[RMDB]
RNA sequence: GGGAACGACUCGAGUAGAGUCGAAAAGAUAUGGAUGUUGCGUGGGAGCCACUUGUCGGAAACGACAAGAUGGCAUCGAUCACGUCAACAUCCUAAGUCAAAAGUGGCAAAGUUCGCUUUGCCACAACUACUAAUCGCUCUUCGGAGCGAUUAGUAGAAAAGAAACAACAACAACAAC
Reactivity to DMS in 0.01 (KOAc 150mM, MgCl2 10mM, bicine 150mM(pH8.5), 24C), signal-to-noise 3, nucleotides 027 to 126: g010a020u000a210u010g010g000a040u000g000u000u000g000c010g030u000g010g010g010a180g010c000c000a020c000u000u000g010u010c000g010g010a030a020a110c000g020a000c000a010a000g010a080u000g040g020c010a070u010c190g020a160u000c010a000c010g010u020c030a010a010c000a010u010c000c000u000a000a040g000u010c010a120a080a140a140g020u000g000g020c000a020a020a010g000u000u010c290g020c000u000u000u010g010c010c000a010c020a020a130
Reactivity to 2A3 in 0.01 (KOAc 150mM, MgCl2 10mM, bicine 150mM(pH8.5), 24C), signal-to-noise 2, nucleotides 027 to 126: g010a000u030a000u080g010g000a020u010g000u000u010g030c000g000u020g010g180g120a120g000c000c000a010c000u000u000g000u000c020g010g010a050a020a010c010g010a000c030a000a010g040a130u000g000g010c000a020u090c030g060a200u020c020a000c010g070u060c000a000a000c000a000u000c000c000u000a000a000g010u020c020a000a050a090a190g010u010g010g000c010a000a020a020g010u090u210c300g080c230u000u000u000g000c000c000a010c010a000a000
An RNA of 177 nucleotides, treated with DMS and 2A3 and read out base by base. For DMS, 3,953 sequencing reads were counted. For DMS the reverse transcriptase was MarathonRT. The reactions ran in a buffer of 150 mM KOAc, 10 mM MgCl2 and 150 mM bicine (pH 8.5), at 24 C. 2A3 adducts were read by reverse transcription with SuperScript II with manganese.